[RMDB]
RNA sequence: GGGAACGACUCGAGUAGAGUCGAAAAGAUAUGGAAGCCAAUUUCUUGGAUUUAUUUCUGUUAUCGGAAACGAUAACGAAAUUGUCAGAAGAUGGCUUCCUAAGUCAAACGACCCUUCGGGGUCGAACGUAUAUAUUAAGUUCGCUUAAUAUAUACGAAAAGAAACAACAACAACAAC
Reactivity to 2A3 in 0.01 (KOAc 150mM, MgCl2 10mM, bicine 150mM(pH8.5), 24C), signal-to-noise 6, nucleotides 027 to 126: g000a010u070a030u190g000g000a000a000g000c000c020a040a100u050u060u030c030u120u210g170g020a090u300u300u120a030u000u110u120c110u300g000u000u000a000u000c000g000g000a050a060a020c010g000a000u000a000a000c000g000a010a010a000u020u030g040u030c020a010g030a070a010g030a060u020g010g000c000u000u000c000c000u000a000a000g000u000c010a040a070a160c020g000a010c010c000c000u010u040c290g060g010g010g000u000c010g000a020a000
Reactivity to DMS in 0.01 (KOAc 150mM, MgCl2 10mM, bicine 150mM(pH8.5), 24C), signal-to-noise 5, nucleotides 027 to 126: g000a050u000a300u010g000g000a020a000g000c000c000a020a090u000u000u000c010u000u010g020g010a030u010u010u000a010u000u000u000c010u010g030u000u000a000u000c000g000g000a120a090a190c000g010a010u000a000a010c000g000a010a010a010u000u000g000u000c010a020g000a020a010g000a080u000g010g010c000u010u000c000c000u000a020a060g000u010c020a080a110a220c020g010a020c000c000c000u000u000c180g020g020g010g000u000c000g000a020a050
The data come from the RNA Mapping Database (RMDB), library TTRDEL. An RNA of 177 nucleotides, treated with 2A3 and DMS and read out base by base. The RNA was probed in 150 mM KOAc, 10 mM MgCl2 and 150 mM bicine (pH 8.5) at 24 C. The DMS profile rests on 9,301 reads.